[RMDB]
RNA sequence: GGGAACGACUCGAGUAGAGUCGAAAAUGGAGAGAGAGACAGAGACAGAUCCAUUCGAUUAGUGAACGGAUCCUUGGCACUUAUCUGGGACGAUCUGCGGAGCCUGUGCCUCUUCAGCUACCACCGCUCGGCCUAUUUUGUUCGCAAAAUAGGCCGAAAAAGAAACAACAACAACAAC
Reactivity to DMS in 0.01 (KOAc 150mM, MgCl2 10mM, bicine 150mM(pH8.5), 24C), signal-to-noise 2, nucleotides 027 to 126: u000g000g000a000g000a060g020a100g010a100g000a070c080a070g000a100g010a230c100a090g000a060u050c000c010a190u070u040c060g000a150u010u000a140g030u020g000a110a010c130g000g020a060u010c130c100u010u060g000g000c060a010c060u000u020a100u000c040u030g060g010g000a070c210g000a030u000c070u000g000c090g000g010a220g010c080c030u030g050u010g000c000c020u000c050u020u010c110a020g060c100u010a040c080c030a040c010c170g010c100
Reactivity to 2A3 in 0.01 (KOAc 150mM, MgCl2 10mM, bicine 150mM(pH8.5), 24C), signal-to-noise 3, nucleotides 027 to 126: u030g020g000a030g000a000g000a000g010a020g040a020c010a010g050a000g000a020c010a040g000a030u010c040c040a060u150u140c040g080a090u050u100a080g010u080g100a200a080c050g050g050a050u090c000c060u070u080g100g000c030a000c020u040u030a010u040c050u050g000g020g060a010c100g020a030u000c020u040g020c000g040g040a030g050c010c000u080g040u060g080c000c010u010c000u010u010c000a000g000c010u110a090c000c020a040c000c000g000c030
Description
The record gives the reactivity of an RNA of 177 nucleotides to DMS and 2A3. The reactions ran in a buffer of 150 mM KOAc, 10 mM MgCl2 and 150 mM bicine (pH 8.5), at 24 C. The 2A3 profile rests on 1,933 reads. For DMS the reverse transcriptase was MarathonRT.